[RMDB]
Annotation: Source: RMDB library M2PK50, as collected in RNAgym. Structure probing data (2A3 and DMS) for a 177-nucleotide construct. As a SHAPE reagent, 2A3 marks flexible, mostly unpaired nucleotides at the ribose 2'-OH. Reactivities are given for positions 27 through 126. Values are in units of 0.01, from 0 to 300, in steps of 10. DMS adducts were read by reverse transcription with MarathonRT. The 2A3 profile rests on 1,788 reads.
RNA sequence: GGGAACGACUCGAGUAGAGUCGAAAACCCUGGUUAUUCGUAACCAGGGGUUGAGUGAAACCUCUCAGUGCAUCGGUGGAUCACACGAAACGCAUGGACGACAAUUACGGUUAUUCGUAACCGUAAACGGAGUUCAUGCUUUCGAGCAUGAACUCCGAAAAGAAACAACAACAACAAC
Reactivity to 2A3 in 0.01 (KOAc 150mM, MgCl2 10mM, bicine 150mM(pH8.5), 24C), signal-to-noise 2, nucleotides 027 to 126: c010c020c000u000g000g000u000u000a020u060u090c200g030u020a010a000c000c000a000g010g010g000g020u060u200g040a070g050u140g100a130a080a090c010c010u070c000u030c080a030g020u000g070c020a050u020c030g090g030u070g020g140a140u100c040a040c010a020c100g020a030a060a000c090g010c020a020u040g040g030a010c010g010a030c040a050a040u020u020a000c010g000g000u000u010a010u030u070c050g000u010a010a000c020c010g000u010a010a020a000
Reactivity to DMS in 0.01 (KOAc 150mM, MgCl2 10mM, bicine 150mM(pH8.5), 24C), signal-to-noise 4, nucleotides 027 to 126: c000c000c000u000g000g000u000u000a000u000u010c170g010u010a000a010c010c010a030g020g000g010g020u010u000g000a110g010u000g000a090a120a120c060c030u000c040u000c040a060g010u010g000c070a050u010c040g020g010u010g010g000a130u000c090a060c070a080c020g000a020a030a080c130g000c020a020u000g000g020a030c060g010a070c080a050a230u000u000a000c000g010g000u000u000a030u000u020c180g010u000a010a000c000c000g010u000a000a020a110